[RMDB]
RNA sequence: GGGAACGACUCGAGUAGAGUCGAAAAUAGUGCCUGUAGUUAACAAUACUGUAUUGUACACUUAAAAAUUUGCAUGCUGGAUGCGGUGGCUCAUGCCUGUAAUCCUAGUGCUUUGGGAGGCCAAGAGUAUCCGGGGUAUUUUCGAAUACCCCGGAUAAAAAGAAACAACAACAACAAC
Reactivity to DMS in 0.01 (KOAc 150mM, MgCl2 10mM, bicine 150mM(pH8.5), 24C), signal-to-noise 1, nucleotides 027 to 126: u010a100g030u010g010c010c040u000g000u010a000g020u000u010a140a080c030a040a030u000a110c180u000g030u010a030u000u000g000u000a050c130a050c040u000u020a030a020a070a080a060u000u000u000g010c040a030u000g010c120u010g000g010a080u000g010c060g020g010u010g030g010c040u010c140a120u000g000c060c020u030g030u000a090a060u010c010c030u000a120g010u000g010c000u010u010u000g000g010g000a050g010g020c030c040a080a100g010a090g000
This 177-nucleotide RNA was probed chemically with DMS. The data come from the RNA Mapping Database (RMDB), library OK2TST. The RNA was probed in 150 mM KOAc, 10 mM MgCl2 and 150 mM bicine (pH 8.5) at 24 C.